[RMDB]
RNA sequence: GGGAACGACUCGAGUAGAGUCGAAAAGAUAUGGAUCGUGUACAUUCUGAUGACCUGGCUCGGAAACGAGCCAGCAAGGAAGUACCGAUCCUAAGUCAAAACCCAACUGUCUUCGGACAGUUGGGAAGACUUGCAUCAUGUUCGCAUGAUGCAAGUCAAAAGAAACAACAACAACAAC
Reactivity to 2A3 in 0.01 (KOAc 150mM, MgCl2 10mM, bicine 150mM(pH8.5), 24C), signal-to-noise 3, nucleotides 027 to 126: g000a010u040a020u080g000g000a010u010c030g040u080g000u300a050c070a300u210u110c050u090g300a300u080g000a080c000c000u000g000g010c000u000c010g000g050a030a040a020c000g000a000g000c020c050a000g000c010a050a200g020g000a150a200g010u000a000c010c000g000a000u020c010c000u000a010a000g040u000c000a010a040a100a210c010c000c000a000a010c000u000g010u000c000u030u100c210g110g010a000c000a000g000u000u000g000g000g020a000a000
Reactivity to DMS in 0.01 (KOAc 150mM, MgCl2 10mM, bicine 150mM(pH8.5), 24C), signal-to-noise 2, nucleotides 027 to 126: g030a010u000a120u000g000g000a030u000c000g030u000g000u000a010c000a300u010u000c010u000g000a100u010g010a030c300c000u000g010g010c010u000c000g010g000a070a040a080c000g020a030g040c000c000a000g000c030a020a020g030g010a040a270g030u000a010c000c000g000a030u000c000c000u000a000a040g000u000c000a140a030a110a240c000c000c000a000a000c000u000g000u010c000u000u020c230g040g000a000c000a000g000u000u000g010g020g000a010a030
An RNA of 177 nucleotides, treated with 2A3 and DMS and read out base by base. The data come from the RNA Mapping Database (RMDB), library TTRDES. Values are in units of 0.01, from 0 to 300, in steps of 10. For 2A3 the reverse transcriptase was SuperScript II with manganese. For DMS the reverse transcriptase was MarathonRT. The DMS profile rests on 1,676 reads. Values cover nucleotides 27 to 126.